The record gives the reactivity of an RNA of 207 nucleotides to 2A3 and DMS.
RNA sequence: GGGAACGACUCGAGUAGAGUCGAAAACGUUGUCAUCGACAACACCCUAUGCAUUCAUGCUCUGUAAGGAUGCGCCGAAAGGUGAGCAAGCCCGAGUUGCCCAGAUCUGAAAUGCAACACUUUAGAGAAAACCCGAAGCAGUUCGCUGCUUCGGGAAGUGUUUUUUAAUGUUCGCAUUAAAAAACACAAAAGAAACAACAACAACAAC
Reactivity to 2A3 in 0.01 (KOAc 150mM, MgCl2 10mM, bicine 150mM(pH8.5), 24C), signal-to-noise 3, nucleotides 027 to 156: c080g010u010u020g020u020c090a210u150c300g030a000c000a000a000c010a050c000c000c000u020a050u060g000c010a000u000u010c030a050u180g010c010u010c010u040g020u020a030a020g000g010a010u000g010c000g000c000c000g100a130a050a000g020g000u020g010a010g010c040a040a040g010c010c030c000g090a040g040u030u030g040c060c030c010a030g010a100u040c040u070g050a040a090a050u150g030c020a030a060c010a030c040u120u150u160a080g010a020g020a060a080a050a070c010c000c000g000a010a000g000c000a000g000u050u140c140g020c120u000g000c000u000u000c000g000g000g000a000a000
Reactivity to DMS in 0.01 (KOAc 150mM, MgCl2 10mM, bicine 150mM(pH8.5), 24C), signal-to-noise 2, nucleotides 027 to 156: c080g000u000u000g040u000c020a110u000c170g040a090c000a030a060c010a170c020c010c020u010a100u010g000c070a080u000u000c080a270u020g000c060u000c000u010g000u020a290a210g000g000a070u000g000c000g020c080c000g000a120a150a190g000g020u020g010a110g000c030a170a260g000c100c020c020g010a200g040u000u000g010c010c040c010a170g010a120u000c020u000g010a050a050a090u000g010c080a160a050c010a050c050u000u000u000a060g000a080g010a110a050a070a150c000c000c000g020a010a000g000c000a090g010u000u000c280g020c000u000g050c010u000u000c010g000g010g000a000a000
The RNA was probed in 150 mM KOAc, 10 mM MgCl2 and 150 mM bicine (pH 8.5) at 24 C. 2A3 adducts were read by reverse transcription with SuperScript II with manganese.